[RMDB]
RNA sequence: GGGAACGACUCGAGUAGAGUCGAAAAAUAAAGCACGGCAAGCACAUGAAGCACAUGAAGCAGUACAAGCUCAUGAAGCAGUACAAGCACUACAAGCAGUAGAAGCAGCCGAAGCACAUGAAAAAAAGCUAAUAACACUGUUCGCAGUGUUAUUAGCAAAAGAAACAACAACAACAAC
Reactivity to DMS in 0.01 (KOAc 150mM, MgCl2 10mM, bicine 150mM(pH8.5), 24C), signal-to-noise 2, nucleotides 027 to 126: a110u010a050a140a090g030c020a180c100g020g020c040a050a160g000c100a060c060a080u000g020a110a080g020c030a120c070a010u000g000a130a090g010c000a030g000u000a050c210a150a100g050c010u000c070a080u000g030a060a080g050c030a050g000u000a000c050a150a120g050c040a100c020u000a030c080a080a100g000c100a080g000u000a050g010a070a050g000c030a050g000c070c030g030a100a070g000c020a090c090a040u000g000a000a010a000a070a020a080a050
Reactivity to 2A3 in 0.01 (KOAc 150mM, MgCl2 10mM, bicine 150mM(pH8.5), 24C), signal-to-noise 2, nucleotides 027 to 126: a000u220a000a070a010g030c010a000c050g010g010c050a050a020g010c000a050c020a100u060g100a130a000g020c070a030c000a050u010g090a110a040g000c010a000g040u100a050c040a180a040g000c030u000c020a090u060g060a110a000g000c010a000g040u080a020c020a010a090g000c020a000c050u080a020c010a090a070g180c060a010g030u040a010g020a140a040g000c020a000g000c020c040g030a030a010g000c000a040c030a130u140g090a010a070a090a000a000a000a000